[RMDB]
RNA sequence: GGGAACGACUCGAGUAGAGUCGAAAAGAUAUGGACAUGGGACAUGAAGGCACACUCGGAAACGAGUGGAUCUUCAACAGCCCAUAAGUCCUAAGUCAAAACCACAGGGCGUUCGCGCCCUGUGGAACAAGGGUAAAUUGUUCGCAAUUUACCCUUGAAAAGAAACAACAACAACAAC
Reactivity to 2A3 in 0.01 (KOAc 150mM, MgCl2 10mM, bicine 150mM(pH8.5), 24C), signal-to-noise 2, nucleotides 027 to 126: g020a030u070a050u130g000g000a010c020a020u000g000g020g000a040c060a120u120g030a050a000g010g000c050a000c000a000c030u020c010g010g060a060a100a070c020g020a000g000u000g000g010a000u000c000u010u010c010a010a010c030a040g030c000c000c030a020u040a030a000g000u000c000c010u010a130a010g070u030c050a040a030a110a190c010c000a010c000a010g030g020g000c060g090u150u170c300g030c000g040c200c000c000u000g010u000g010g000a000a000
Reactivity to DMS in 0.01 (KOAc 150mM, MgCl2 10mM, bicine 150mM(pH8.5), 24C), signal-to-noise 6, nucleotides 027 to 126: g000a010u000a300u010g000g020a020c000a060u000g010g010g010a050c100a240u010g010a020a000g010g000c300a090c010a010c000u010c000g000g000a140a100a180c000g000a010g010u000g000g000a030u000c000u000u000c000a010a030c250a110g000c000c000c000a010u010a060a050g010u000c000c000u000a060a090g000u000c050a080a080a110a150c010c000a000c010a010g010g010g020c000g040u000u010c210g010c010g000c000c000c000u010g010u000g000g010a040a060
The record gives the reactivity of an RNA of 177 nucleotides to 2A3 and DMS. The data come from the RNA Mapping Database (RMDB), library TTRDEL. For 2A3, 7,139 sequencing reads were counted. Values are in units of 0.01, from 0 to 300, in steps of 10. 2A3 adducts were read by reverse transcription with SuperScript II with manganese. DMS adducts were read by reverse transcription with MarathonRT.